RNA sequence: GGGAACGACUCGAGUAGAGUCGAAAAUAAAACCACAGAAUUGAACAGUAAAGAUGGUGUCCACUAUCUGAGUUCAUUGACAUUCCGCACAGAUGAUUCACGGGGCACUUGACAAAUGAAUUAGCUCGACUGCUAUAGUAUUCGUACUAUAGCAGUCAAAAGAAACAACAACAACAAC
Reactivity to DMS in 0.01 (KOAc 150mM, MgCl2 10mM, bicine 150mM(pH8.5), 24C), signal-to-noise 9, nucleotides 027 to 126: u040a060a070a100a170c020c020a110c190a080g010a130a040u010u010g000a020a030c010a120g010u020a080a090a010g000a010u000g000g000u010g010u030c190c140a080c040u000a010u000c020u010g000a100g010u000u000c010a030u020u020g010a110c130a090u020u010c020c030g000c060a090c080a100g000a070u010g010a050u000u000c040a050c110g010g010g000g010c060a080c090u010u020g000a100c150a050a050a070u030g000a070a070u010u020a110g010c100u010c150
Reactivity to 2A3 in 0.01 (KOAc 150mM, MgCl2 10mM, bicine 150mM(pH8.5), 24C), signal-to-noise 9, nucleotides 027 to 126: u110a010a070a020a020c020c020a050c030a100g250a170a120u150u120g040a080a010c020a040g120u210a090a130a040g050a040u060g030g010u030g100u120c090c060a040c050u060a040u060c020u030g030a010g060u050u020c020a010u040u070g040a020c030a070u100u070c040c040g050c050a020c000a050g090a070u050g010a040u070u060c050a030c090g000g010g030g000c010a020c050u040u040g060a050c040a040a100a100u150g070a040a080u150u070a070g030c060u050c100

An RNA of 177 nucleotides, treated with DMS and 2A3 and read out base by base. The RNA was probed in 150 mM KOAc, 10 mM MgCl2 and 150 mM bicine (pH 8.5) at 24 C. For 2A3, 16,221 sequencing reads were counted.